Structure probing data (2A3 and DMS) for a 177-nucleotide construct.
High DMS reactivity at an A or C suggests that its Watson-Crick edge is free.
Source: RMDB library OK2TRN, as collected in RNAgym.
The RNA was probed in 150 mM KOAc, 10 mM MgCl2 and 150 mM bicine (pH 8.5) at 24 C.
RNA sequence: GGGAACGACUCGAGUAGAGUCGAAAAUACAAAAGAGAAAUUCAAAAUGACAGAGGUUGCAGCAGCAUACGGUGAUGAGGAUGUCCUGUCAAAAUCCUUAAGAAUCCUGAAGAUAAUUAACUGGAGGGAUACAAUGACUGUUCGCAGUCAUUGUAUCAAAAGAAACAACAACAACAAC
Reactivity to 2A3 in 0.01 (KOAc 150mM, MgCl2 10mM, bicine 150mM(pH8.5), 24C), signal-to-noise 2, nucleotides 027 to 126: u200a010c050a050a090a050a000g110a050g070a050a140a050u120u140c080a060a050a080a140u070g030a030c030a020g120a010g130g040u100u080g030c020a030g010c000a010g000c010a050u060a140c040g060g000u080g070a080u050g010a030g000g000a020u040g070u020c010c010u010g030u000c020a000a050a030a050u010c000c000u010u040a040a030g040a040a040u010c000c000u080g050a040a000g020a030u080a080a140u270u050a070a040c050u030g080g020a040g050g130
Reactivity to DMS in 0.01 (KOAc 150mM, MgCl2 10mM, bicine 150mM(pH8.5), 24C), signal-to-noise 4, nucleotides 027 to 126: u010a120c110a080a070a080a080g000a140g010a110a100a070u010u010c080a050a070a090a120u000g010a090c060a080g000a120g010g020u000u000g020c030a040g000c050a040g000c030a040u000a050c100g000g000u000g020a050u000g010a040g010g010a070u010g010u010c070c000u000g010u010c100a070a030a080a070u000c020c010u000u010a050a110g000a140a070u000c010c010u010g010a100a090g010a070u000a080a070u010u000a030a090c090u010g000g010a070g020g000